[RMDB]
RNA sequence: GGGAACGACUCGAGUAGAGUCGAAAACAUGCAUGGUAUUUGAAAAUGACUUUUCGGAGUUUGAUAGCACCCAGAACAACUUCUCUCUCGGCCUUGAGUGUGUGGUUAUGGAGGAGUGCGGCAUGCCGAUCCUAUUGAGAUUCGUCUCAAUAGGAUCAAAAGAAACAACAACAACAAC
Reactivity to DMS in 0.01 (KOAc 150mM, MgCl2 10mM, bicine 150mM(pH8.5), 24C), signal-to-noise 9, nucleotides 027 to 126: c070a060u010g010c020a090u000g000g010u000a050u010u000u010g000a070a060a090a090u010g010a090c050u000u000u000u010c100g010g000a080g010u000u000u000g010a120u000a080g010c060a070c030c020c040a100g010a100a080c110a050a060c030u000u000c020u000c020u000c100u000c090g010g010c070c060u010u000g010a080g020u000g010u000g020u000g000g010u000u000a090u000g000g000a090g010g010a060g020u000g010c060g010g000c040a030u000g010c110c160
Reactivity to 2A3 in 0.01 (KOAc 150mM, MgCl2 10mM, bicine 150mM(pH8.5), 24C), signal-to-noise 9, nucleotides 027 to 126: c020a020u080g020c010a040u060g040g050u200a200u070u160u180g110a090a090a040a060u130g020a040c020u070u060u070u090c180g120g010a050g030u050u070u060g130a070u070a030g010c020a030c000c000c030a020g080a040a020c030a010a020c030u060u020c020u000c000u000c010u020c040g130g020c050c050u090u110g030a080g060u090g020u030g020u030g040g070u060u040a080u180g040g020a040g000g020a050g000u030g020c020g020g010c020a010u040g050c030c050